[RMDB]
RNA sequence: GGGAACGACUCGAGUAGAGUCGAAAAGUUGAGAGCGUUUAACUUAAGUCUUUUUUAUUAGCUUAAAAAAACUAUAUACAAGUGGUGCUAGUCCGCCACUCUAAGGGGACGCCUUUAGAAGAAGAGGGAAAGGCACUAAGCUUCGGCUUAGUGCCAACCAAGAGACAGAGUUCGCUCUGUCUCUUGGAAAAGAAACAACAACAACAAC
Reactivity to 2A3 in 0.01 (KOAc 150mM, MgCl2 10mM, bicine 150mM(pH8.5), 24C), signal-to-noise 1, nucleotides 027 to 156: g070u090u140g050a090g000a040g080c030g020u100u080u160a090a070c020u030u020a030a000g090u260c080u010u190u040u060u000u020a170u070u140a100g000c010u040u070a100a000a010a000a020a110a070c060u070a110u040a000u000a250c070a050a030g000u010g020g010u000g020c030u040a070g010u080c060c010g010c010c000a010c000u000c010u070a060a060g020g000g000g020a000c030g040c010c000u090u140u070a030g000a070a000g010a040a010g010a080g050g020g030a040a000a240g000g020c000a000c000u000a010a000g020c000u020u120c250g020g000c020u000u030a000g000u000g000c000c000a000a000